This 177-nucleotide RNA was probed chemically with 2A3 and DMS. The RNA was probed in 150 mM KOAc, 10 mM MgCl2 and 150 mM bicine (pH 8.5) at 24 C. For 2A3 the reverse transcriptase was SuperScript II with manganese. In probing experiments dimethyl sulfate is read out at A N1 and C N3, which are open when not base-paired.
RNA sequence: GGGAACGACUCGAGUAGAGUCGAAAAGCGGAUAUUUUCAGUGAUCUGCAGAAGUCCGGCACUUCCGGCCAGAAACAGCUGAAUACCUUCAUUUGUGGCGCGGCGAUAAAGCGGUGUAACUGCACCGAGUGUCUAUCAGAUUCGUCUGAUAGACACUAAAAGAAACAACAACAACAAC
Reactivity to 2A3 in 0.01 (KOAc 150mM, MgCl2 10mM, bicine 150mM(pH8.5), 24C), signal-to-noise 3, nucleotides 027 to 126: g040c050g000g030a030u040a130u120u150u020u040c030a020g020u020g080a070u010c000u030g000c000a010g030a100a000g040u070c080c000g080g030c070a030c050u090u050c010c010g080g000c040c000a010g030a020a130a040c040a020g090c010u010g000a020a010u050a070c010c000u030u100c060a130u030u100u150g050u070g020g000c020g000c010g060g000c040g010a030u070a140a090a010g040c020g000g030u010g010u020a200a230c130u180g010c020a010c000c000g000
Reactivity to DMS in 0.01 (KOAc 150mM, MgCl2 10mM, bicine 150mM(pH8.5), 24C), signal-to-noise 5, nucleotides 027 to 126: g010c060g020g000a060u010a050u000u010u000u000c040a050g020u010g000a070u000c020u000g010c050a110g000a070a120g010u000c040c080g010g010c190a130c090u000u000c020c040g010g010c130c030a030g010a060a060a110c140a130g010c040u000g010a060a040u000a080c110c050u000u000c070a100u010u000u000g040u000g010g000c050g020c050g010g000c050g000a060u010a030a060a110g000c010g000g010u000g010u010a080a100c190u000g000c030a040c010c020g000